About this RNA:
An RNA of 207 nucleotides, treated with 2A3 and read out base by base. The reactions ran in a buffer of 150 mM KOAc, 10 mM MgCl2 and 150 mM bicine (pH 8.5), at 24 C.
RNA sequence: GGGAACGACUCGAGUAGAGUCGAAAAAUGAUACUCGUAAAGCAUACGUUACAUGCUAAGUUAAAUAUAACUAACAACGAAUUACAAGUAGCCUAGUUAAUAGGUGCCAAAACAAUAGAGUUGCUCUAACAUCUAUUUGAGGUUCAAAGAUUUGAGCGUUGACAUCUCGGUUCGCCGAGAUGUCAACAAAAGAAACAACAACAACAAC
Reactivity to 2A3 in 0.01 (KOAc 150mM, MgCl2 10mM, bicine 150mM(pH8.5), 24C), signal-to-noise 2, nucleotides 027 to 156: a000u160g060a040u060a110c010u000c020g010u010a090a210a020g000c010a020u000a040c000g060u100u040a070c050a040u000g000c010u020a020a010g020u050u040a090a220a170u210a130u050a150a090c090u070a060a010c100a040a040c040g130a130a090u160u080a100c060a140a020g080u020a000g040c000c000u030a020g030u100u130a190a040u030a150g010g000u010g040c010c000a000a000a000a000c000a000a000u000a000g010a000g020u030u170g010c010u020c000u000a000a000c000a010u000c000u000a000u000u000u020g010a000g000g000u040u090c050a070a040a000g070a000u050u050u030g020a030g010c050